[RMDB]
RNA sequence: GGGAACGACUCGAGUAGAGUCGAAAAUUUCUCCUAUUCGUAGGAGAAAGAAGGACCACCCGGGAGGGUUAAGGCCAUACGGAGAGCCGGGUCCACUGCCGAUAAGGGCUGAGUUCGCUCAGCCCAAAUCUUAUGCUGUGUUCGCACAGCAUAAGAUAAAAGAAACAACAACAACAAC
Reactivity to 2A3 in 0.01 (KOAc 150mM, MgCl2 10mM, bicine 150mM(pH8.5), 24C), signal-to-noise 1, nucleotides 027 to 126: u000u000u000c000u000c000c000u020a020u060u040c200g090u030a010g000g010a010g030a000a010a000g020a000a100g000g000a010c000c010a010c000c030c010g010g070g060a100g020g030g000u050u120a080a050g000g000c020c010a050u100a160c080g060g040a110g000a030g130c030c000g030g010g000u000c000c010a000c080u150g080c020c010g050a070u090a160a140g030g000g000c020u000g000a020g000u050u110c200g010c140u000c020a000g000c000c000c000a010a000
Reactivity to DMS in 0.01 (KOAc 150mM, MgCl2 10mM, bicine 150mM(pH8.5), 24C), signal-to-noise 2, nucleotides 027 to 126: u000u000u000c000u000c000c000u000a040u010u000c150g010u000a010g000g000a020g000a000a010a020g000a210a140g000g000a030c010c000a070c000c000c010g040g010g000a160g000g000g010u000u000a080a110g000g010c000c020a100u020a090c090g000g000a300g000a120g000c010c020g010g020g000u000c020c000a040c210u000g020c010c020g000a150u010a120a120g020g010g000c000u000g010a010g020u000u000c200g010c000u000c000a010g020c010c020c000a010a000